[RMDB]
RNA sequence: GGGAACGACUCGAGUAGAGUCGAAAAUAAUAAUCUUGACAAGUUAUCAUGCUCGUUGCAGGUAGAUCAUCCGGGAAAUUCUGACUAACGAGGCAGCCGAAGUUUCCGCCGGCAUCCAGUAGACCAAUCCAUUAGGGGACUUCGGUCCCCUAAUGGAAAAAGAAACAACAACAACAAC
Reactivity to 2A3 in 0.01 (KOAc 150mM, MgCl2 10mM, bicine 150mM(pH8.5), 24C), signal-to-noise 1, nucleotides 027 to 126: u140a000a000u140a080a100u110c010u000u130g060a020c040a070a230g060u110u100a100u040c160a030u100g000c000u010c000g050u000u020g030c010a000g000g080u060a000g000a150u020c000a070u000c020c020g060g000g020a050a050a050u080u040c050u040g230a250c070u070a050a000c060g000a050g010g000c010a010g000c000c000g040a110a050g070u000u080u000c000c090g000c000c060g020g000c000a000u000c000c010a000g000u020a000g070a060c060c000a090a070
Reactivity to DMS in 0.01 (KOAc 150mM, MgCl2 10mM, bicine 150mM(pH8.5), 24C), signal-to-noise 1, nucleotides 027 to 126: u020a140a040u000a010a070u010c030u000u000g000a070c150a050a160g010u000u020a020u050c110a030u000g000c000u000c040g120u000u000g000c000a050g000g000u020a010g060a080u000c020a040u020c010c020g000g020g030a030a070a050u050u000c000u010g010a050c100u000a040a110c100g000a100g020g040c020a130g000c030c000g050a040a120g000u000u010u000c050c040g010c120c000g000g020c060a060u000c020c020a000g000u000a100g010a130c040c000a080a160
Structure probing data (2A3 and DMS) for a 177-nucleotide construct. The 2A3 profile rests on 506 reads. For 2A3 the reverse transcriptase was SuperScript II with manganese. The data come from the RNA Mapping Database (RMDB), library OK1LIB. Values are in units of 0.01, from 0 to 300, in steps of 10.